Background: Chemical mapping of a 177-nucleotide RNA with DMS and 2A3. For 2A3 the reverse transcriptase was SuperScript II with manganese. Conditions: 150 mM KOAc, 10 mM MgCl2 and 150 mM bicine (pH 8.5), 24 C.
RNA sequence: GGGAACGACUCGAGUAGAGUCGAAAAGCUUUACCUCUGUCAAGAUAAGGGACCCACUGCCUAUUUUGCUGCCGCUACAGUGUUUCUCUGUGAUGGUAUUACCUUCUUUGAUUGGUAUGAUAAGAUAUACGAAUAAACGUUUCGACGUUUAUUCGUAAAAAGAAACAACAACAACAAC
Reactivity to DMS in 0.01 (KOAc 150mM, MgCl2 10mM, bicine 150mM(pH8.5), 24C), signal-to-noise 4, nucleotides 027 to 126: g020c090u000u000u000a080c030c010u000c050u000g010u010c070a060a100g010a090u010a070a100g010g000g000a100c030c040c010a090c090u000g010c020c030u010a090u010u000u010u020g010c090u000g010c060c040g030c040u000a060c040a040g010u000g010u010u000u010c040u000c040u000g020u010g010a080u010g010g020u000a080u010u000a050c040c010u000u000c080u000u000u000g010a100u010u000g010g000u000a030u000g000a120u000a070a060g010a110u010a170
Reactivity to 2A3 in 0.01 (KOAc 150mM, MgCl2 10mM, bicine 150mM(pH8.5), 24C), signal-to-noise 3, nucleotides 027 to 126: g020c000u090u080u070a090c010c020u000c060u060g090u070c040a060a040g010a160u130a120a120g020g020g040a060c000c000c020a040c010u070g010c000c010u120a140u050u070u100u070g010c030u030g030c010c020g040c020u030a010c000a010g010u010g010u100u050u030c010u010c000u040g040u030g050a050u050g040g040u030a040u030u050a050c020c000u030u070c060u130u160u080g130a180u030u060g030g040u080a070u080g040a060u070a140a070g020a050u110a000
Source information
Source: RMDB library OK2TRN, as collected in RNAgym. Reactivities are rounded to 0.1 and cut off at 0 and 3.